[RMDB]
RNA sequence: GGGAACGACUCGAGUAGAGUCGAAAAUGUGUGGGGACUAUGCACUGGCAAGUGAAGACGUUGUCAAGUGUUUUCUAAACGGCACGGGCUGUUUCCUAGACUGUGAAAUCAAAGCUGCAGUGCUCUCGCAAUUGUGUCAGUUCGCUGACACAAUUGCAAAAGAAACAACAACAACAAC
Reactivity to DMS in 0.01 (KOAc 150mM, MgCl2 10mM, bicine 150mM(pH8.5), 24C), signal-to-noise 2, nucleotides 027 to 126: u020g030u010g000u020g030g000g000g010a110c110u000a070u000g030c020a020c050u020g000g040c030a050a070g020u000g000a150a100g000a130c090g000u000u000g000u000c040a050a040g000u000g030u000u000u010u000c120u000a050a130a110c290g020g000c030a050c050g010g000g000c010u000g020u000u000u000c010c030u000a130g020a110c170u000g000u020g000a010a030a040u010c230a030a080a050g010c040u000g010c010a070g010u000g010c000u010c130u010c180
Reactivity to 2A3 in 0.01 (KOAc 150mM, MgCl2 10mM, bicine 150mM(pH8.5), 24C), signal-to-noise 1, nucleotides 027 to 126: u090g050u000g010u070g020g010g000g000a020c000u050a070u210g010c000a000c090u000g000g000c040a030a130g030u090g080a060a010g110a060c080g050u030u030g010u000c030a090a090g000u000g000u030u030u040u000c020u040a130a110a050c050g010g060c000a030c000g010g030g000c000u010g000u010u040u000c010c010u050a130g010a240c080u090g010u090g210a080a000a010u210c150a150a130a000g000c000u130g000c040a050g040u000g070c000u000c000u000c020